[RMDB]
Annotation:
Structure probing data (DMS and 2A3) for a 207-nucleotide construct. Conditions: 150 mM KOAc, 10 mM MgCl2 and 150 mM bicine (pH 8.5), 24 C. The data come from the RNA Mapping Database (RMDB), library M2RFPK. High 2A3 reactivity points to a flexible backbone, as in loops and unpaired stretches. For 2A3, 1,405 sequencing reads were counted. 2A3 adducts were read by reverse transcription with SuperScript II with manganese.
RNA sequence: GGGAACGACUCGAGUAGAGUCGAAAAGUUCGCAUGGUGCACUAUUGUGUUAUUAGUAACUAAGUAAGCUUACAAUCGAAAAUGAUUAACCAUAAAAGGGUAAAAUGGUGUAAGACAGUCUGAUACUUUACGGCUUCACGUUUCGACGUGAAGCCAACCCAAUUCUCUAGUUCGCUAGAGAAUUGGGAAAAGAAACAACAACAACAAC
Reactivity to DMS in 0.01 (KOAc 150mM, MgCl2 10mM, bicine 150mM(pH8.5), 24C), signal-to-noise 1, nucleotides 027 to 156: g000u000u010c070g050c050a170u000g010g020u010g000c020a030c000u000a070u010u000g020u010g010u000u040a090u000u000a160g000u000a060a100c070u000a090a110g010u000a070a060g010c030u000u000a020c050a060a050u010c050g010a050a090a090a090u000g010a160u000u000a030a040c010c010a110u000a090a070a090a200g010g000g000u000a060a060a110a020u000g000g010u000g000u000a060a050g010a060c070a070g040u000c000u000g000a180u000a070c020u000u010u000a130c050g020g000c000u000u000c000a040c040g000u000u010u000c220g010a020c010g040u000g020a000a040g000c000c000a010a000
Reactivity to 2A3 in 0.01 (KOAc 150mM, MgCl2 10mM, bicine 150mM(pH8.5), 24C), signal-to-noise 3, nucleotides 027 to 156: g060u080u050c070g000c140a080u060g030g000u060g050c040a010c030u130a200u160u170g010u000g030u060u040a000u020u050a070g060u050a020a010c060u000a000a140g110u020a130a000g070c010u020u050a010c030a140a120u060c020g050a260a000a000a010u050g020a040u020u130a050a000c010c000a020u130a160a170a030a000g090g050g020u070a040a040a050a100u070g020g000u000g030u060a040a020g030a060c000a020g040u030c080u100g030a010u030a170c030u040u060u020a080c110g000g020c000u010u000c000a000c000g030u010u040u130c230g100a030c000g000u000g000a000a000g000c000c000a000a000